This 207-nucleotide RNA was probed chemically with DMS and 2A3. Reactivities are rounded to 0.1 and cut off at 0 and 3. For 2A3 the reverse transcriptase was SuperScript II with manganese. DMS adducts were read by reverse transcription with MarathonRT. The 2A3 profile rests on 2,056 reads. High 2A3 reactivity points to a flexible backbone, as in loops and unpaired stretches.

RNA sequence: GGGAACGACUCGAGUAGAGUCGAAAAGCUUAUACUAAUGGUACUGAUUACUGACUCCAUCAUACAAAUGCUUACAUACAAAAUACCCCUACCAGUAUCCUCUUAGCGCUCUCUGUAACAGUUAUUCUUGACUCCCUUGUAGUCAUGAUACCCUGUACCGUAUUUUACGUUUCGACGUAAAAUACGGAAAAGAAACAACAACAACAAC
Reactivity to DMS in 0.01 (KOAc 150mM, MgCl2 10mM, bicine 150mM(pH8.5), 24C), signal-to-noise 1, nucleotides 027 to 156: g050c060u010u020a160u000a080c020u000a090a050u030g000g010u010a090c050u010g000a130u000u000a150c080u000g010a110c000u010c040c010a060u000c090a090u000a160c030a080a050a170u000g020c010u000u000a110c070a160u000a140c050a080a090a070a170u000a100c000c000c010c000u000a020c080c010a060g000u000a080u000c020c020u000c030u000u000a020g000c000g030c030u000c000u010c060u010g000u000a040a050c040a120g000u030u010a140u000u000c030u000u010g010a020c030u010c020c070c000u010u000g040u000a040g000u000c030a070u000g030a180u000a070c030c030c030u000g020u000a100
Reactivity to 2A3 in 0.01 (KOAc 150mM, MgCl2 10mM, bicine 150mM(pH8.5), 24C), signal-to-noise 4, nucleotides 027 to 156: g030c050u160u130a060u090a160c050u110a050a070u120g040g000u030a040c030u040g070a090u140u120a060c040u090g050a060c030u030c040c030a100u100c050a040u130a170c080a040a170a050u120g040c030u140u110a050c020a080u130a010c070a050a120a060a100u110a090c050c000c000c000u030a050c020c000a010g010u010a050u070c020c000u030c020u060u060a030g000c010g010c040u030c010u000c010u080g050u080a050a020c020a040g010u020u080a100u120u040c050u030u060g010a000c020u020c030c010c020u040u110g090u160a010g000u020c010a020u010g030a000u020a030c010c010c010u030g040u070a070